[RMDB]
RNA sequence: GGGAACGACUCGAGUAGAGUCGAAAAAUCAGACGGGUCACGUACGUCUGGCGACCGCAAGGAAAACUUACGCUAAUGCCGCGUGAGUCCUAAUCAAAGUCUGGAUAUGCUCUACGUGCCGCAUUCGGCUGGAUCGCGACUUCGGUCGCGAUCCAGCAAAAGAAACAACAACAACAAC
Reactivity to 2A3 in 0.01 (KOAc 150mM, MgCl2 10mM, bicine 150mM(pH8.5), 24C), signal-to-noise 1, nucleotides 027 to 126: a000u080c020a000g020a010c050g000g000g000u120c000a000c090g080u260a000c080g090u110c150u090g000g060c000g020a020c000c000g000c140a070a080g020g000a120a000a070a000c040u060u030a000c000g060c060u000a170a260u270g110c170c160g000c050g000u000g000a010g020u020c030c030u150a200a130u160c040a040a040a040g170u000c000u000g250g000a170u210a040u280g060c020u000c000u140a010c040g000u000g000c010c000g000c010a080u140u190c130g000
An RNA of 177 nucleotides, treated with 2A3 and read out base by base. Reactivities are given for positions 27 through 126. The RNA was probed in 150 mM KOAc, 10 mM MgCl2 and 150 mM bicine (pH 8.5) at 24 C. Reactivities are rounded to 0.1 and cut off at 0 and 3. The data come from the RNA Mapping Database (RMDB), library OK1LIB.